Record summary:
This 177-nucleotide RNA was probed chemically with DMS and 2A3. Conditions: 150 mM KOAc, 10 mM MgCl2 and 150 mM bicine (pH 8.5), 24 C.
[RMDB]
RNA sequence: GGGAACGACUCGAGUAGAGUCGAAAAAGUUGCCAUUGGAAGGCAACUGAAGAAGAGUUUCCUGGCACUACAAGCUAGGAUUGCCAGGGCACUGGCAAAGAAACAAAGUGCCCGUGCUGCACGCAGGUAUAUUCUGGGUUUUCGAACCCAGAAUAUAAAAAGAAACAACAACAACAAC
Reactivity to DMS in 0.01 (KOAc 150mM, MgCl2 10mM, bicine 150mM(pH8.5), 24C), signal-to-noise 5, nucleotides 027 to 126: a010g000u000u000g010c010c000a150u010u020g030g020a220a140g010g000c000a010a000c000u000g000a100a100g000a140a110g010a060g020u000u000u000c000c000u000g000g010c000a030c030u000a180c230a030a020g000c000u000a000g000g010a020u000u000g010c000c000a090g010g000g000c030a010c000u010g010g000c010a000a010a110g010a150a070a070c150a050a070a040g010u000g010c000c000c010g020u010g010c030u000g000c120a080c160g000c060a080g000g000
Reactivity to 2A3 in 0.01 (KOAc 150mM, MgCl2 10mM, bicine 150mM(pH8.5), 24C), signal-to-noise 3, nucleotides 027 to 126: a000g010u010u000g000c020c010a030u080u280g240g120a220a110g020g000c000a000a000c010u010g020a040a060g070a080a030g050a000g080u050u200u000c000c000u010g000g000c020a000c020u260a110c080a150a000g000c000u020a000g010g010a010u020u010g000c000c000a050g010g000g000c010a000c010u020g000g000c010a040a020a040g080a020a070a000c070a010a060a020g010u010g000c000c000c000g040u060g000c020u120g040c040a030c180g030c020a040g140g000

The data come from the RNA Mapping Database (RMDB), library OK2TST. DMS adducts were read by reverse transcription with MarathonRT. For 2A3 the reverse transcriptase was SuperScript II with manganese. Reactivities are given for positions 27 through 126.